[RMDB]
This 177-nucleotide RNA was probed chemically with DMS and 2A3. Conditions: 150 mM KOAc, 10 mM MgCl2 and 150 mM bicine (pH 8.5), 24 C. DMS adducts were read by reverse transcription with MarathonRT.

RNA sequence: GGGAACGACUCGAGUAGAGUCGAAAAAGAUAUGGAGCUUCGACAUGCGAUUAGUCAGUGCAACAGCAGAGCUCGGAAACGAGCUCUGACAUGCACUGAAUUUCGCAACAGCGAAGCUCCUAAGUCACAAAAUGCAUAAGUUCGCUUAUGCAUUUUGAAAAGAAACAACAACAACAAC
Reactivity to DMS in 0.01 (KOAc 150mM, MgCl2 10mM, bicine 150mM(pH8.5), 24C), signal-to-noise 8, nucleotides 027 to 126: a060g000a040u010a300u010g000g010a010g010c000u000u000c000g010a070c110a290u010g010c000g000a020u010u000a070g010u000c000a000g010u000g000c000a030a080c250a230g000c000a020g000a020g030c000u000c010g000g000a090a110a250c000g010a010g010c000u000c000u000g000a020c080a200u000g000c000a010c000u000g010a010a040u000u000u000c010g010c000a030a060c300a190g000c020g000a010a010g000c000u000c000c000u000a000a050g010u000c030a240
Reactivity to 2A3 in 0.01 (KOAc 150mM, MgCl2 10mM, bicine 150mM(pH8.5), 24C), signal-to-noise 3, nucleotides 027 to 126: a020g050a020u080a020u130g010g000a010g010c030u010u000c020g120a140c060a120u090g000c000g010a020u050u100a110g130u010c010a010g000u000g000c010a140a130c030a280g090c010a000g010a000g020c010u000c010g000g010a060a080a020c010g000a000g010c030u000c010u000g010a000c000a000u030g010c000a000c010u000g000a000a000u010u010u000c000g000c000a020a020c010a050g130c000g020a000a000g000c000u000c000c000u000a010a010g000u010c000a010
It was measured as part of the RMDB library TTRDES.